[RMDB]
RNA sequence: GGGAACGACUCGAGUAGAGUCGAAAAGAUCUGCGCCGAUCCGAAACGCUAGCAAACAGCCCGCAUCAUGUCGUCUCCUAACUUCGACAUGGUGAAAUACUGAGCUUAUGCGAGUAAGCCUGUUAGCAAUAGAUCAGAACGUUCGCGUUCUGAUCAAACACAAAAUUAUGUUCGCAUAAUUUUGUGUAAAAGAAACAACAACAACAAC
Reactivity to DMS in 0.01 (KOAc 150mM, MgCl2 10mM, bicine 150mM(pH8.5), 24C), signal-to-noise 4, nucleotides 027 to 156: g000a070u010c020u010g020c060g040c050c040g010a100u000c040c030g010a120a080a070c060g020c010u000a030g000c010a050a060a150c130a080g020c000c030c020g010c020a020u000c010a010u000g010u000c000g010u010c090u010c120c060u000a110a090c080u000u000c030g020a040c010a000u000g000g000u000g000a040a080a120u000a090c070u000g010a120g010c000u000u000a180u000g020c160g000a180g000u000a040a100g000c020c040u000g010u000u000a080g040c050a100a120u010a100g010a030u000c000a010g000a030a010c010g020u000u000c300g030c030g030u000u000c000u000g010a010u000c000a030a070
Reactivity to 2A3 in 0.01 (KOAc 150mM, MgCl2 10mM, bicine 150mM(pH8.5), 24C), signal-to-noise 9, nucleotides 027 to 156: g020a050u020c020u090g050c060g020c050c030g040a060u030c030c030g050a060a070a020c070g000c030u040a020g010c040a060a050a110c030a060g040c000c010c000g010c010a010u000c000a000u010g000u000c000g020u010c050u100c090c100u140a150a180c070u070u040c010g000a000c000a000u000g010g000u000g010a020a010a000u130a020c040u030g020a020g020c000u030u020a000u090g080c050g000a050g050u020a010a000g010c000c010u040g010u050u060a020g000c030a100a140u060a200g000a000u000c000a000g010a000a000c010g020u050u060c220g010c000g100u000u000c020u000g000a000u000c000a000a010